This 177-nucleotide RNA was probed chemically with DMS. Reactivities are given for positions 27 through 126. It was measured as part of the RMDB library OK2TST. The DMS profile rests on 862 reads.
[RMDB]
RNA sequence: GGGAACGACUCGAGUAGAGUCGAAAAUCGUCUUGUGUUACCCUGCUCCACAUCUCGCGUAGUAGAACCCGGGUAUCCACGCUUCUAACUGGUACGGCAACGGCCCACAGCUCCUCAACCGGGUGUGUACCCCGGGGAGAUUCGUCUCCCCGGGGUAAAAAGAAACAACAACAACAAC
Reactivity to DMS in 0.01 (KOAc 150mM, MgCl2 10mM, bicine 150mM(pH8.5), 24C), signal-to-noise 1, nucleotides 027 to 126: u000c080g010u000c070u000u000g010u010g010u000u010a030c060c010c020u010g010c050u000c030c020a010c060a050u000c050u000c050g040c170g010u010a060g000u000a150g000a010a070c010c000c010g000g020g020u000a040u000c050c050a080c050g010c040u000u000c060u010a120a150c080u010g000g000u000a100c080g010g020c120a070a080c050g010g020c010c000c020a070c080a120g010c030u000c010c020u000c160a050a150c020c050g000g000g000u010g010u000g030